[RMDB]
RNA sequence: GGGAACGACUCGAGUAGAGUCGAAAAGUGGACACCUUCUACACUUGUCUUUACCGGUCACUGUUGCACCCCAACACCUUUAACGACGUGGACGGACGUUACAUCGGAUUCGACGGUGUCAUCCACAUGUUGCGGUCGCAUUCGUGCGACCGCAACAAAAAGAAACAACAACAACAAC
Reactivity to 2A3 in 0.01 (KOAc 150mM, MgCl2 10mM, bicine 150mM(pH8.5), 24C), signal-to-noise 1, nucleotides 027 to 126: g140u090g000g020a000c020a000c060c040u000u000c000u020a010c020a020c040u080u020g070u010c070u030u120u110a050c020c000g040g040u000c020a020c020u100g040u080u040g050c000a110c030c040c000c010a000a010c010a060c060c030u110u040u040a120a110c110g030a020c000g110u000g060g020a020c000g020g000a050c050g020u040u040a020c020a000u070c030g120g090a290u060u260c100g020a080c080g000g010u000g000u070c000a050u000c000c060a010c000a070